[RMDB]
An RNA of 177 nucleotides, treated with 2A3 and DMS and read out base by base. The 2A3 profile rests on 1,877 reads. For 2A3 the reverse transcriptase was SuperScript II with manganese. The data come from the RNA Mapping Database (RMDB), library OK2TRN. For DMS the reverse transcriptase was MarathonRT.
RNA sequence: GGGAACGACUCGAGUAGAGUCGAAAACAUGUAGUACUGAUGCUAGCUAGCGUACUAUCAUGCAUGCAUGCUCGUCUAGCAUGAGUCUAGCGUCAUGUCAUGGCUAGUAUACUGAUCAGUAUCGUCGCCCGAAGUAGAGCUUCGGCUCUACUUCGGGAAAAGAAACAACAACAACAAC
Reactivity to 2A3 in 0.01 (KOAc 150mM, MgCl2 10mM, bicine 150mM(pH8.5), 24C), signal-to-noise 3, nucleotides 027 to 126: c060a070u220g150u180a030g000u000a030c000u040g040a010u070g120c060u050a010g040c010u030a010g040c020g100u030a040c060u100a160u240c060a060u140g070c000a000u000g010c000a000u020g000c020u030c080g240u060c090u030a040g070c060a180u280g220a040g030u020c000u010a000g000c030g020u040c010a010u020g100u110c020a040u040g060g000c010u000a000g000u010a070u020a110c040u110g060a030u030c000a030g010u020a010u070c030g070u060c060g060
Reactivity to DMS in 0.01 (KOAc 150mM, MgCl2 10mM, bicine 150mM(pH8.5), 24C), signal-to-noise 1, nucleotides 027 to 126: c100a090u010g000u000a120g040u000a010c020u020g020a020u000g010c130u000a070g040c140u010a030g020c010g000u000a020c040u010a080u020c090a050u000g010c300a050u000g000c050a000u000g050c040u000c040g000u000c020u020a040g000c030a180u020g030a180g000u000c020u000a000g000c000g000u000c010a000u010g010u000c060a000u000g000g010c210u000a020g050u000a060u010a090c050u000g000a050u000c050a030g000u000a000u000c040g000u010c060g010